[RMDB]
RNA sequence: GGGAACGACUCGAGUAGAGUCGAAAAUUAACACCACAUGGAAGCCACCAAGGCUUAGGGCUUGUUCUCUUCUGAAGCAAUGGCCCAAGCUAUACCUUGGCUCAUUUUAGCCAUGGCUGGAGUUGGAACAGCCACAAUGAAGGGAGCCAUGUCUGGAUGGUAAAAUAAAUUUCGAUUUAUUUUACCAAAAAGAAACAACAACAACAAC
Reactivity to DMS in 0.01 (KOAc 150mM, MgCl2 10mM, bicine 150mM(pH8.5), 24C), signal-to-noise 3, nucleotides 027 to 156: u000u020a090a110c070a180c040c020a090c040a080u000g000g030a100a100g030c020c010a150c100c080a120a260g020g000c020u000u000a070g020g030g030c000u010u000g010u010u000c020u010c080u000u000c090u000g030a130a100g010c080a060a070u000g010g000c020c020c010a020a060g000c030u000a100u000a060c050c040u000u000g020g030c010u000c120a160u010u000u020u040a080g040c010c060a090u000g000g020c000u000g030g000a100g010u010u000g010g010a120a120c030a040g020c000c010a040c020a060a110u000g000a090a060g020g020g010a160g040c000c010a040u000g010u000c010u020g010g010a300
Reactivity to 2A3 in 0.01 (KOAc 150mM, MgCl2 10mM, bicine 150mM(pH8.5), 24C), signal-to-noise 2, nucleotides 027 to 156: u040u010a010a050c030a030c090c010a020c020a010u060g030g050a020a020g030c030c010a050c040c060a120a160g010g010c030u060u020a120g000g000g000c000u090u100g090u110u000c040u050c000u300u080c080u210g100a130a000g010c060a010a100u110g090g000c000c020c010a010a000g000c020u070a050u050a150c030c030u020u050g000g010c010u000c020a020u010u070u020u190a010g000c020c010a020u010g000g000c000u010g040g020a110g030u110u090g070g060a060a030c010a010g000c000c010a000c040a000a100u180g020a030a030g040g000g000a000g000c000c020a010u030g030u000c020u020g010g050a060